[RMDB]
RNA sequence: GGGAACGACUCGAGUAGAGUCGAAAAACCUGGGCAACACGGUGAAACACCAUCUCUACAAAAAAUACCAAAAAGUGAGCGGGCAUGGUGGCACAUGCCUGUGGUCCCAGCUACUUGGAAGGCUGAAGUGGGAAGAUCUCUUGAGCCCAAGAGGUCAAAUUAGCUGGUGAUUCGUCACCAGCUAAUUAAAAGAAACAACAACAACAAC
Reactivity to DMS in 0.01 (KOAc 150mM, MgCl2 10mM, bicine 150mM(pH8.5), 24C), signal-to-noise 1, nucleotides 027 to 156: a090c050c010u000g000g000g040c040a090a120c020a050c040g000g040u020g000a180a110a120c040a080c050c000a040u000c030u000c000u030a210c080a000a040a040a070a080a080u020a140c120c090a010a040a050a190a090g050u000g000a110g030c050g000g020g110c000a040u000g020g000u000g020g000c170a130c000a000u000g010c030c000u000g040u000g000g020u010c000c000c000a090g060c000u000a030c070u000u030g010g010a090a060g020g100c010u000g040a030a090g040u000g010g010g010a070a180g020a040u000c010u000c020u010u000g000a050g000c040c020c000a070a070g000a020g050g020u000c010a030
Reactivity to 2A3 in 0.01 (KOAc 150mM, MgCl2 10mM, bicine 150mM(pH8.5), 24C), signal-to-noise 1, nucleotides 027 to 156: a030c040c000u040g000g030g010c050a090a020c020a020c040g020g000u060g010a080a060a060c010a010c030c020a020u010c030u000c050u130a090c180a000a020a010a000a060a070u240a090c050c060a070a110a040a010a030g100u090g060a040g000c020g000g050g000c000a000u010g030g030u020g040g010c040a020c000a040u040g000c010c020u010g000u000g000g010u050c010c000c060a010g020c000u090a100c000u060u000g060g020a040a020g080g000c020u060g040a030a030g030u100g060g020g000a060a060g010a050u010c010u040c000u040u010g010a050g050c070c010c030a000a000g020a000g030g010u070c010a000